RNA sequence: GGGAACGACUCGAGUAGAGUCGAAAACGCUGGGAUAACCCUCGACUCUCUAUUCUACUGAAGCGCGCACGGUAGAAUGAAUCUCGAGGUUAUCCUGUGCUGAAGCGCGCACGGCAACCGAAAGGUGCGAAAAUGUUAUGGCUUCGGCCAUAACAAAUGAACUGUCCAUGUUCGCAUGGACAGUUCAAAAAGAAACAACAACAACAAC
Reactivity to 2A3 in 0.01 (KOAc 150mM, MgCl2 10mM, bicine 150mM(pH8.5), 24C), signal-to-noise 2, nucleotides 027 to 156: c040g000c010u040g000g000g000a010u000a010a000c140c100c010u010c010g020a050c040u090c020u000c090u300a090u090u010c000u000a000c000u000g120a300a110g000c000g000c000g020c000a010c000g000g000u000a000g000a020a060u120g090a080a150u140c070u020c130g000a010g000g010u020u010a000u000c000c010u010g010u000g020c020u050g020a130a030g000c010g000c010g000c000a010c000g010g010c010a030a000c010c000g000a100a040a000g000g000u000g010c000g040a040a000a060a140u090g000u000u000a000u020g000g020c000u030u070c300g080g000c010c000a000u010a000a000c000a000a050a030